[RMDB]
RNA sequence: GGGAACGACUCGAGUAGAGUCGAAAAGAAGUUUCUGUAGUUGUUAAUGUGUUCGCCUUAGCAUUAAUAGUAGUAACCGGAGACAUCAGCGUGGUACAAAUACCACCCGAACAACUAGUUAUAGUAGCAUCUGGUAUCACUUCGGUGAUACCAGAUGAAAAGAAACAACAACAACAAC
Reactivity to DMS in 0.01 (KOAc 150mM, MgCl2 10mM, bicine 150mM(pH8.5), 24C), signal-to-noise 2, nucleotides 027 to 126: g000a100a150g010u000u000u000c010u000g030u000a080g010u000u020g040u000u000a060a070u000g020u000g020u000u000c120g030c040c040u000u000a240g010c020a080u010u000a030a030u010a070g030u010a090g000u000a030a050c200c050g010g000a050g020a040c080a070u000c080a080g050c170g010u000g000g020u000a220c200a060a090a160u000a030c000c000a000c000c040c080g000a030a100c170a050a050c020u000a060g000u000u000a090u000a080g010u000a080g000
Reactivity to 2A3 in 0.01 (KOAc 150mM, MgCl2 10mM, bicine 150mM(pH8.5), 24C), signal-to-noise 1, nucleotides 027 to 126: g090a100a020g000u000u010u070c070u090g070u170a180g050u000u070g020u000u050a040a070u100g000u000g050u110u050c050g040c050c000u130u130a010g000c000a010u040u080a010a070u150a130g180u040a020g040u040a040a030c020c010g000g000a040g020a020c000a040u040c000a010g060c040g000u020g000g070u110a100c130a060a130a020u090a050c000c030a020c000c040c040g020a050a030c000a010a020c020u020a010g090u110u210a150u090a210g080u020a010g050
An RNA of 177 nucleotides, treated with DMS and 2A3 and read out base by base.
The 2A3 profile rests on 759 reads.
2A3 adducts were read by reverse transcription with SuperScript II with manganese.
High 2A3 reactivity points to a flexible backbone, as in loops and unpaired stretches.